[RMDB]
RNA sequence: GGGAACGACUCGAGUAGAGUCGAAAAGAAAGAAAGAAAGAAUGGAGUUUUCUCUCUUCUAAUCCUGAAACAGGGUCAGACUCUGCCCUAAUGAGGAGAAGCAGCAGAGAAUGGGACUGCAUCAUAACAUCCUAGCUAGCUUCGGCUAGCUAGGAUGAAAAGAAACAACAACAACAAC
Reactivity to DMS in 0.01 (KOAc 150mM, MgCl2 10mM, bicine 150mM(pH8.5), 24C), signal-to-noise 2, nucleotides 027 to 126: g040a070a060a040g000a000a120a010g010a060a000a000g000a160a120u020g000g000a060g000u000u000u000u000c000u000c000u000c030u000u000c010u000a090a200u000c010c000u010g020a090a040a130c270a000g000g000g000u000c100a010g000a040c130u000c010u010g090c020c020c040u020a130a280u070g000a040g050g000a100g000a050a050g000c300a070g000c000a000g000a010g000a070a180u090g000g000g010a040c000u000g040c080a020u000c060a030u060a060a150
Reactivity to 2A3 in 0.01 (KOAc 150mM, MgCl2 10mM, bicine 150mM(pH8.5), 24C), signal-to-noise 3, nucleotides 027 to 126: g060a000a020a000g100a010a060a000g150a050a110a010g050a000a120u090g050g090a030g100u060u000u020u000c010u000c000u020c000u030u000c000u000a030a060u000c010c010u040g060a100a040a050c060a020g000g010g240u300c010a020g020a180c010u070c040u170g000c010c000c040u140a170a160u090g030a000g000g040a050g000a030a020g030c020a000g000c010a000g050a000g010a040a040u100g110g000g120a000c020u010g090c040a020u030c020a000u040a150a030